[RMDB]
RNA sequence: GGGAACGACUCGAGUAGAGUCGAAAAUUGGUUACACCAAGGAGGGUAGUGUGAUCAAUUUCUGUUACAUGCAUCAAAUGGAACUUGCUAAUGGUACACAUACCGGUUCAGCAUUUGAUGGUACUAUAUCGAUGGACCUUCGGGUCCAUCAAAAGAAACAACAACAACAAC
Reactivity to 2A3 in 0.01 (KOAc 150mM, MgCl2 10mM, bicine 150mM(pH8.5), 24C), signal-to-noise 7, nucleotides 027 to 129: u010u000g000g000u000u000a010c010a000c000c040a110a100g140g050a100g030g130g060u190a060g000u010g000u000g010a000u000c000a000a000u030u010u030c020u040g130u030u100a100c060a110u170g110c000a010u000c000a010a010a020u010g010g010a010a000c000u040u040g030c020u140a140a080u090g020g030u140a030c170a010c020a170u030a050c000c020g010g010u020u010c030a160g030c010a070u000u000u000g000a010u020g000g050u000a050c060u050a030u050a080u190c090
Reactivity to DMS in 0.01 (KOAc 150mM, MgCl2 10mM, bicine 150mM(pH8.5), 24C), signal-to-noise 3, nucleotides 027 to 129: u040u000g000g000u000u000a010c010a060c000c070a130a160g030g010a000g000g000g000u050a080g020u030g000u020g020a040u010c020a000a040u030u010u030c090u030g040u030u060a080c080a150u090g030c020a030u070c000a000a000a000u000g050g010a060a050c020u040u020g000c180u030a040a030u030g030g050u050a080c300a070c090a130u030a060c160c100g030g050u010u040c000a170g030c020a000u000u000u000g020a030u000g060g000u040a070c120u060a070u020a040u040c170